[RMDB]
RNA sequence: GGGAACGACUCGAGUAGAGUCGAAAAGAACAACCUCUGUUUUCCACUGGGUCAGCCCAGUAUCACCAGGCAACUAGCACUGGUAUUAAGAAGGCGAAUGAACAUCUCACUCUGCCUAGUAAUUCAGUACCACAGGGGGAUGCUGACAGUCACCUCACUUUUAUAGCAUGUUCGCAUGCUAUAAAAGAAAAGAAACAACAACAACAAC
Reactivity to 2A3 in 0.01 (KOAc 150mM, MgCl2 10mM, bicine 150mM(pH8.5), 24C), signal-to-noise 4, nucleotides 027 to 156: g050a040a030c040a030a060c010c040u050c080u080g090u020u020u050u070c020c000a020c010u000g000g000g060u120c060a080g070c010c000c000a020g010u000a090u150c040a020c010c000a000g010g000c030a100a160c210u100a050g000c050a060c240u020g000g020u020a050u070u170a050a040g070a010a020g010g000c030g020a010a060u100g010a050a020c050a220u100c040u010c090a020c030u070c040u080g000c000c000u040a020g080u030a020a120u130u080c040a020g050u050a060c000c040a030c100a120g010g010g000g000g000a000u060g010c010u020g020a040c020a050g050u010c010a040c060c000u030c010a070
Reactivity to DMS in 0.01 (KOAc 150mM, MgCl2 10mM, bicine 150mM(pH8.5), 24C), signal-to-noise 2, nucleotides 027 to 156: g010a070a120c030a080a120c020c020u000c010u000g000u000u000u000u000c030c080a130c020u010g010g020g020u010c160a220g010c050c020c010a060g020u010a050u010c070a080c000c010a080g040g030c060a070a110c100u000a070g020c050a070c020u030g010g020u000a000u010u010a050a070g000a140a070g000g030c000g000a050a070u000g000a000a200c190a100u010c100u000c030a070c010u000c050u010g050c020c010u010a060g010u000a040a080u000u010c080a100g000u010a040c020c020a000c070a040g000g020g050g010g020a080u010g010c030u000g030a130c030a060g000u010c070a050c020c000u000c030a180